The record gives the reactivity of an RNA of 177 nucleotides to 2A3 and DMS. For 2A3, 3,637 sequencing reads were counted. DMS adducts were read by reverse transcription with MarathonRT. The RNA was probed in 150 mM KOAc, 10 mM MgCl2 and 150 mM bicine (pH 8.5) at 24 C.
RNA sequence: GGGAACGACUCGAGUAGAGUCGAAAAGGUGGAGAAAAGCAUGGAUGGCAUAUGUGGAGCCUUCACUAUAAGGCAAAAGGUGUUCAAGGACAAAAAAGGCAAUGUGAGUUAUAAAGGACUGGGAGUACUGAACAAAGAGUUUCGACUCUUUGUUCAGAAAAGAAACAACAACAACAAC
Reactivity to 2A3 in 0.01 (KOAc 150mM, MgCl2 10mM, bicine 150mM(pH8.5), 24C), signal-to-noise 5, nucleotides 027 to 126: g100g000u080g030g040a050g050a020a100a020a000g020c040a030u060g000g060a030u040g060g030c050a040u090a090u230g040u030g030g050a020g030c000c000u040u050c010a000c010u070a060u100a300a030g000g000c030a100a010a040a040g060g000u050g010u080u060c040a050a080g040g010a040c050a040a120a000a050a010a000g040g040c030a010a020u040g020u040g080a100g020u060u060a090u080a150a100a020g050g010a020c040u030g010g060g000a030g010u050a060
Reactivity to DMS in 0.01 (KOAc 150mM, MgCl2 10mM, bicine 150mM(pH8.5), 24C), signal-to-noise 5, nucleotides 027 to 126: g000g050u000g000g010a030g000a060a050a090a080g040c060a060u010g000g020a050u010g000g000c080a050u010a050u020g010u000g020g000a170g000c040c010u010u000c140a100c140u030a090u040a070a040g000g000c060a070a060a090a090g020g020u000g010u010u010c070a090a090g030g010a060c120a010a030a050a050a050a060g000g010c060a060a060u020g030u020g000a040g000u010u000a090u010a020a060a090g000g000a030c040u000g000g000g000a080g010u010a130